[RMDB]
RNA sequence: GGGAACGACUCGAGUAGAGUCGAAAAAGCACCAUUGCCGGAACCACUGACACCACCGCGAAAGAGCGUGAACCUGUCGAUCCGACGCUGAUGAUCGAUGUGGAAUACAAAUGCGAACAGACCAACUUUGACACGGUGCUGACCUACGCGAAGCUGGGUCUUUCACGGUUUUCGAACCGUGAAAGACAAAAGAAACAACAACAACAAC
Reactivity to DMS in 0.01 (KOAc 150mM, MgCl2 10mM, bicine 150mM(pH8.5), 24C), signal-to-noise 1, nucleotides 027 to 156: a100g020c010a060c040c000a260u020u000g040c000c000g000g050a060a200c040c000a070c050u000g000a140c040a040c080c000a100c010c000g000c020g000a150a140a110g020a080g030c010g000u000g000a040a100c060c030u000g020u000c000g020a000u000c010c020g020a230c070g070c060u010g000a110u000g000a060u000c080g040a030u000g030u060g020g020a110a140u000a180c050a020a070a110u000g050c030g010a080a030c060a160g000a180c040c000a010a060c020u000u020u020g040a150c050a040c070g000g000u000g000c080u000g020a070c000c020u000a170c100g000c010g000a020a110g040c010u050g000g000
Reactivity to 2A3 in 0.01 (KOAc 150mM, MgCl2 10mM, bicine 150mM(pH8.5), 24C), signal-to-noise 2, nucleotides 027 to 156: a000g050c020a000c010c010a070u010u090g030c010c000g040g050a030a030c010c000a040c010u030g030a040c010a030c040c000a030c000c060g010c020g050a070a150a140g140a030g020c040g030u070g020a020a050c010c030u010g000u000c000g000a000u020c000c010g090a050c140g050c140u120g060a210u140g000a010u040c030g010a000u020g100u100g170g010a040a000u120a040c080a050a120a000u130g040c070g000a050a020c030a030g030a050c010c040a020a050c020u050u070u110g080a080c100a040c120g000g010u040g000c020u000g030a010c000c020u030a020c030g000c020g050a090a120g000c030u090g060g000
This 207-nucleotide RNA was probed chemically with DMS and 2A3.
For DMS the reverse transcriptase was MarathonRT.
It was measured as part of the RMDB library OK3TST.